[RMDB]
The record gives the reactivity of an RNA of 170 nucleotides to DMS and 2A3. For DMS, 23,116 sequencing reads were counted. DMS adducts were read by reverse transcription with MarathonRT. 2A3 adducts were read by reverse transcription with SuperScript II with manganese. The 2A3 profile rests on 27,925 reads.

RNA sequence: GGGAACGACUCGAGUAGAGUCGAAAAACUUUAUGUCUACAAUUAUUACUUCCUGCCAAACUGCUGUUAGUAAGCUUCUAGAUACAUGUUUUGAAGCUACAGAAGCAACAUUUAACUUCUUGUUAGAACGCUGAAGAGUUCGCUCUUCAGAAAAGAAACAACAACAACAAC
Reactivity to DMS in 0.01 (KOAc 150mM, MgCl2 10mM, bicine 150mM(pH8.5), 24C), signal-to-noise 5, nucleotides 027 to 129: a030c070u000u050u000a000u030g000u000c040u040a040c090a020a010u030u030a090u080u030a000c200u000u000c000c040u010g040c080c080a030a050a060c090u050g030c000u020g000u000u000a070g000u000a120a010g000c010u010u000c020u040a050g000a070u000a110c270a090u080g040u000u000u000u000g010a080a080g020c020u000a050c000a060g000a080a000g030c030a000a000c160a150u050u000u060a030a050c090u030u040c090u000u040g000u000u080a050g020a040a090c160g040
Reactivity to 2A3 in 0.01 (KOAc 150mM, MgCl2 10mM, bicine 150mM(pH8.5), 24C), signal-to-noise 9, nucleotides 027 to 129: a010c110u190u150u120a130u160g070u030c040u100a050c040a070a070u130u060a070u070u060a150c030u060u020c010c000u030g050c050c050a070a130a110c080u040g000c010u010g030u140u070a060g010u050a110a050g010c000u000u000c020u030a020g010a030u050a160c120a080u140g080u020u030u010u040g020a010a000g020c020u000a010c010a020g040a050a010g030c010a020a040c020a070u080u120u110a060a050c020u060u070c020u030u030g020u000u010a050g010a100a030c070g010